[RMDB]
RNA sequence: GGGAACGACUCGAGUAGAGUCGAAAAUGUUCAAAAAUACCAGUUUUGGGGAAAAACAUUCCAAAUGGUACUCUCAGCAGAAAUCUCAAUCUGCCAAAUGACAAGGACUCAAAUGCAGUGAGUCAAACAGCUGUUCAACCUGCUUUGUGCCUAGAGAUCAUACUGGAUUAUUCGUAAUCCAGUAUGAAAAAGAAACAACAACAACAAC
Reactivity to DMS in 0.01 (KOAc 150mM, MgCl2 10mM, bicine 150mM(pH8.5), 24C), signal-to-noise 3, nucleotides 027 to 156: u010g000u000u020c060a030a070a080a080a070u000a160c010c000a060g010u010u000u000u000g020g000g040g020a050a090a100a140a060c060a140u010u000c010c010a040a070a070u000g010g000u000a040c040u000c090u010c090a080g030c020a070g000a040a080a070u010c050u000c060a120a110u000c010u000g000c010c040a070a060a110u010g010a110c060a070a210g020g000a050c000u000c000a010a070a130u000g030c070a050g020u010g000a130g020u010c040a080a050a070c040a080g020c070u010g030u000u000c060a060a100c040c010u000g010c020u000u000u000g010u000g020c040c010u010a080g010a130g000a140
Reactivity to 2A3 in 0.01 (KOAc 150mM, MgCl2 10mM, bicine 150mM(pH8.5), 24C), signal-to-noise 6, nucleotides 027 to 156: u080g000u050u080c020a070a020a000a080a090u060a050c020c020a040g010u030u030u050u110g040g000g000g070a060a130a060a070a060c040a090u120u020c020c000a020a030a040u030g010g000u020a050c030u050c030u020c080a010g000c010a010g060a070a190a140u050c080u020c080a050a120u000c010u030g000c000c020a050a100a120u090g030a050c030a060a050g050g010a070c000u000c050a030a050a040u130g000c010a010g030u030g110a030g050u110c020a030a080a010c030a030g090c040u110g030u150u080c040a080a040c010c010u010g010c000u030u030u040g020u020g010c000c000u050a060g010a010g000a090

The record gives the reactivity of an RNA of 207 nucleotides to DMS and 2A3. It was measured as part of the RMDB library OK3TST. The DMS profile rests on 6,807 reads. For 2A3 the reverse transcriptase was SuperScript II with manganese.